Structure probing data (DMS) for a 177-nucleotide construct. Conditions: 150 mM KOAc, 10 mM MgCl2 and 150 mM bicine (pH 8.5), 24 C. Reactivities are given for positions 27 through 126.

RNA sequence: GGGAACGACUCGAGUAGAGUCGAAAACAAAAUGAUUGGUUUAGUGCUAGGGCUUAUUAUUCCUCUUUUCUAGUUCAUGCUUUGCGGAUAUGGGAAUACAUUUGAAGGGCAUCAGAGAAAUGUGACCACAGGGUUUAUUCUUCGGAAUAAACCCUGUAAAAGAAACAACAACAACAAC
Reactivity to DMS in 0.01 (KOAc 150mM, MgCl2 10mM, bicine 150mM(pH8.5), 24C), signal-to-noise 1, nucleotides 027 to 126: c050a090a080a090a100u010g020a090u000u010g010g010u000u010u000a090g010u000g000c020u000a070g000g000g020c060u030u000a040u000u000a120u010u000c020c000u000c060u000u000u000u000c050u000a070g000u000u020c040a060u000g000c060u000u000u000g010c090g010g000a080u000a050u010g030g010g000a070a110u000a060c070a050u000u010u010g020a150a040g000g000g010c070a020u000c040a050g000a170g010a030a080a110u020g000u010g020a100c120c130